About this RNA: An RNA of 177 nucleotides, treated with DMS and 2A3 and read out base by base. The reactions ran in a buffer of 150 mM KOAc, 10 mM MgCl2 and 150 mM bicine (pH 8.5), at 24 C. Source: RMDB library TTRDES, as collected in RNAgym.

[RMDB]
RNA sequence: GGGAACGACUCGAGUAGAGUCGAAAAGAUAUGGAUCCCAUCUUCUCGAUAAGCUCCAUUCGGAAACGAAUGAGAGCUUUUGACGAGAUUUUGGAUCCUAAGUCUAAAACCGUCGUUCGCGACGGAACUGACAAGUCAAGUUCGCUUGACUUGUCAGAAAAGAAACAACAACAACAAC
Reactivity to DMS in 0.01 (KOAc 150mM, MgCl2 10mM, bicine 150mM(pH8.5), 24C), signal-to-noise 2, nucleotides 027 to 126: g000a010u020a300u010g000g010a030u010c090c050c140a040u000c030u000u000c050u020c000g020a160u020a030a010g010c000u000c000c010a040u010u000c000g000g000a100a070a180c010g010a040a010u010g000a150g030a000g000c010u000u000u000u010g010a270c210g000a020g000a020u000u000u000u000g010g020a040u000c000c030u000a040a140g000u000c030u010a090a040a120a110c000c010g000u010c000g000u000u010c300g000c000g020a030c010g010g010a020a120
Reactivity to 2A3 in 0.01 (KOAc 150mM, MgCl2 10mM, bicine 150mM(pH8.5), 24C), signal-to-noise 1, nucleotides 027 to 126: g000a010u030a030u080g040g000a030u050c070c030c070a060u000c020u300u110c010u000c020g200a170u040a300a010g020c010u020c000c010a040u030u000c010g000g000a080a020a020c040g000a000a010u170g050a150g030a030g260c050u000u000u010u020g050a050c020g030a000g010a010u000u020u030u020g020g000a020u000c010c020u000a080a030g020u010c040u050a010a020a130a300c000c000g000u010c000g030u080u140c300g000c000g110a010c000g030g000a030a050